This 177-nucleotide RNA was probed chemically with DMS and 2A3.
Source: RMDB library M2PK90, as collected in RNAgym.
The reactions ran in a buffer of 150 mM KOAc, 10 mM MgCl2 and 150 mM bicine (pH 8.5), at 24 C.
The DMS profile rests on 1,524 reads.
For 2A3 the reverse transcriptase was SuperScript II with manganese.
DMS adducts were read by reverse transcription with MarathonRT.
[RMDB]
RNA sequence: GGGAACGACUCGAGUAGAGUCGAAAAAGAAAGCAAGGCGAAGGGAAGCCACCACCGCGGGAGCUGUACGUUGUACGAGAGCUCAGCUUUUACCUUCCCAAACGGCGGAAAGGGAAAACCCAAAAAACAUUAGACAUAGCUUCGGCUAUGUCUAAUGAAAAGAAACAACAACAACAAC
Reactivity to DMS in 0.01 (KOAc 150mM, MgCl2 10mM, bicine 150mM(pH8.5), 24C), signal-to-noise 2, nucleotides 027 to 126: a110g010a050a030a040g030c030a160a130g000g000c050g000a140a080g000g010g000a160a110g000c030c040a130c020c020a060c000c010g010c040g030g020g000a020g010c010u020g020u010a040c040g000u000u010g010u010a100c030g010a130g030a040g020c000u000c000a060g000c010u000u010u000u000a100c100c080u010u000c000c000c010a030a080a090c020g010g030c040g000g000a060a070a070g000g000g010a060a030a090a150c010c010c030a000a040a050a080a090a090
Reactivity to 2A3 in 0.01 (KOAc 150mM, MgCl2 10mM, bicine 150mM(pH8.5), 24C), signal-to-noise 1, nucleotides 027 to 126: a000g040a020a020a000g020c020a000a170g000g020c020g110a060a090g010g010g010a040a000g010c000c020a030c020c010a030c030c010g020c020g020g000g000a000g000c000u040g010u080a030c040g150u150u300g100u190a010c020g030a040g010a000g270c010u000c000a000g010c020u000u000u010u020a020c000c010u000u030c020c000c000a030a070a010c010g060g000c000g000g070a200a090a120g040g010g000a010a030a010a010c050c020c000a090a010a000a010a000a010